An RNA of 207 nucleotides, treated with 2A3 and DMS and read out base by base. The 2A3 profile rests on 1,120 reads. It was measured as part of the RMDB library OK3TST. For 2A3 the reverse transcriptase was SuperScript II with manganese. Conditions: 150 mM KOAc, 10 mM MgCl2 and 150 mM bicine (pH 8.5), 24 C. The DMS profile rests on 2,788 reads.
RNA sequence: GGGAACGACUCGAGUAGAGUCGAAAAGGCUAGUCCAUUUGUUAAGCAUCAGCACGCCACUCCGAUCAAGCCGAUGAUGACCAAGCCGCCAGCGCAUACGGUCAUGGCGGCUACGGUUGCGAUGGUGCGAACGUCGCUGAAUACCAAGCACCAAUCACACAGAGAUCAGAUUCGUCUGAUCUCUGUGAAAAGAAACAACAACAACAAC
Reactivity to 2A3 in 0.01 (KOAc 150mM, MgCl2 10mM, bicine 150mM(pH8.5), 24C), signal-to-noise 2, nucleotides 027 to 156: g040g030c060u040a010g070u090c020c020a070u070u090u130g110u060u080a130a010g040c000a090u020c020a020g050c030a020c060g000c010c020a030c030u000c030c010g070a030u070c090a120a070g050c040c020g060a060u150g050a090u100g020a020c000c010a020a000g000c000c000g030c030c030a030g030c060g000c150a060u070a290c080g160g020u140c050a060u020g000g010c020g000g000c000u030a030c040g020g000u030u040g020c020g040a020u100g010g000u020g030c040g020a110a020c020g020u020c090g000c090u010g070a020a000u110a090c010c050a060a000g030c000a010c010c010a010a100u130c020a000
Reactivity to DMS in 0.01 (KOAc 150mM, MgCl2 10mM, bicine 150mM(pH8.5), 24C), signal-to-noise 1, nucleotides 027 to 156: g000g010c060u000a120g020u000c030c010a150u010u000u000g000u000u000a090a080g040c010a110u000c000a060g010c060a110c050g040c000c030a050c020u000c000c030g000a110u000c040a080a120g030c060c000g020a120u000g000a080u000g020a070c000c010a040a140g000c000c000g000c030c040a080g030c080g020c020a120u020a050c200g040g000u010c020a070u000g000g030c000g000g000c000u000a000c030g060g000u000u000g000c070g030a200u000g020g020u000g020c020g010a090a190c090g000u000c050g030c050u020g010a090a200u010a020c060c030a050a220g040c010a050c010c010a040a130u000c050a260